[RMDB]
RNA sequence: GGGAACGACUCGAGUAGAGUCGAAAAGAAAGCCUAACCUGCCUGAUCUGCGCCCAGACUUGGUCGAGCGUGAAUUCAAAGCCCAAGGUCCGAACAAGCUGUGGGUGGCUGACAUUACGUAUGUGCGUCUUCGUAUCCAGUUCGCUGGAUACGAAGAAAAAGAAACAACAACAACAAC
Reactivity to 2A3 in 0.01 (KOAc 150mM, MgCl2 10mM, bicine 150mM(pH8.5), 24C), signal-to-noise 2, nucleotides 027 to 126: g020a060a050a010g160c030c030u050a040a020c000c020u030g010c070c030u070g030a060u050c000u030g010c020g000c000c000c000a050g070a070c040u060u060g000g000u060c020g000a020g020c090g000u090g080a030a040u150u100c040a130a090a020g040c010c030c000a030a040g120g000u000c010c030g030a080a000c010a010a040g050c060u050g010u050g210g000g000u010g060g070c010u000g010a010c000a060u050u180a030c090g090u140a040u180g090u040g040c020g020
Reactivity to DMS in 0.01 (KOAc 150mM, MgCl2 10mM, bicine 150mM(pH8.5), 24C), signal-to-noise 3, nucleotides 027 to 126: g010a110a090a110g000c040c010u010a090a130c060c040u000g020c050c030u010g000a080u010c050u000g000c070g040c030c030c030a080g010a070c030u010u000g000g000u000c020g030a070g010c050g020u000g010a080a050u010u010c160a060a090a190g000c100c050c020a110a080g020g000u000c050c030g000a060a060c080a050a090g000c080u000g000u010g020g000g020u010g000g010c050u000g000a120c120a050u000u000a050c130g000u000a090u010g020u000g020c080g000
Annotation
This 177-nucleotide RNA was probed chemically with 2A3 and DMS. The reactions ran in a buffer of 150 mM KOAc, 10 mM MgCl2 and 150 mM bicine (pH 8.5), at 24 C. For DMS the reverse transcriptase was MarathonRT.